[RMDB]
RNA sequence: GGGAACGACUCGAGUAGAGUCGAAAAAUGCUACACAACAGAGACAGUCAUUAGCCAAGAUCCCGACAAACUACUAACUGUUGUAGCAUCCGACAAGUGUCCUGUAGUUGAGGUGGAUGGAGUGACAGUAACUAUUGACCUUCGGGUCAAUAGUUACAAAAGAAACAACAACAACAAC
Reactivity to 2A3 in 0.01 (KOAc 150mM, MgCl2 10mM, bicine 150mM(pH8.5), 24C), signal-to-noise 1, nucleotides 027 to 126: a000u020g020c000u010a000c060a000c000a040a150c000a040g060a030g060a090c020a040g020u000c000a020u050u110a030g010c000c000a060a030g090a110u030c040c000c000g020a030c030a010a160a000c010u110a000c020u060a210a040c030u070g030u060u010g030u020a000g020c010a010u020c010c090g030a050c070a140a020g060u010g120u210c070c000u000g050u090a010g020u040u060g050a040g060g050u100g020g000a060u020g010g060a060g030u000g020a000c040a050
Reactivity to DMS in 0.01 (KOAc 150mM, MgCl2 10mM, bicine 150mM(pH8.5), 24C), signal-to-noise 3, nucleotides 027 to 126: a030u010g010c020u010a040c070a110c130a080a070c100a050g020a140g000a080c120a060g020u000c060a020u020u000a070g030c010c030a080a150g010a110u000c020c010c000g020a090c180a030a050a060c070u020a020c070u000a060a100c090u000g030u010u020g000u000a040g010c020a020u000c040c020g020a080c170a060a090g010u020g010u010c020c030u010g010u010a030g010u000u000g000a070g000g000u000g000g020a090u010g020g010a080g000u000g000a080c110a110